[RMDB]
The record gives the reactivity of an RNA of 177 nucleotides to DMS and 2A3. For DMS the reverse transcriptase was MarathonRT. Conditions: 150 mM KOAc, 10 mM MgCl2 and 150 mM bicine (pH 8.5), 24 C. The data come from the RNA Mapping Database (RMDB), library OK1LIB. DMS (dimethyl sulfate) methylates the pairing face of unpaired adenines and cytosines.
RNA sequence: GGGAACGACUCGAGUAGAGUCGAAAAAUUGAUAAUUUAACUAAAUCAACGGAAACGAAAUCAGUGAAUGGAAAAACAGGAAAACCUAAGAAAGUUGCCUUCUUCCAAAUGAUAGGUGAUAGUGCGAUAUCAAUCAUCCGUUCGCGGAUGAUUGAUAAAAAGAAACAACAACAACAAC
Reactivity to DMS in 0.01 (KOAc 150mM, MgCl2 10mM, bicine 150mM(pH8.5), 24C), signal-to-noise 2, nucleotides 027 to 126: a070u000u000g000a030u010a080a030u030u050u030a050a240c160u090a170a190a080u000c000a050a090c050g000g010a100a050a140c070g010a060a040a030u010c000a030g000u030g060a070a090u000g000g000a050a020a060a090a110c200a040g000g000a070a070a060a040c040c010u000a140a180g040a080a060a050g000u000u010g000c000c000u010u000c050u000u060c010c040a030a030a100u010g000a030u010a050g020g000u000g000a010u000a100g010u000g000c070g030a100
Reactivity to 2A3 in 0.01 (KOAc 150mM, MgCl2 10mM, bicine 150mM(pH8.5), 24C), signal-to-noise 2, nucleotides 027 to 126: a000u140u080g020a030u010a240a080u070u030u300a030a150c120u180a090a090a050u040c020a020a080c000g010g080a000a170a070c030g070a000a050a180u000c000a050g080u070g220a110a180u060g000g010a020a000a030a010a090c020a020g000g000a000a240a010a020c000c000u040a040a060g080a040a110a000g010u000u000g030c030c000u040u070c010u080u000c000c000a010a050a020u050g020a020u060a060g190g090u050g050a030u050a000g090u120g140c080g000a000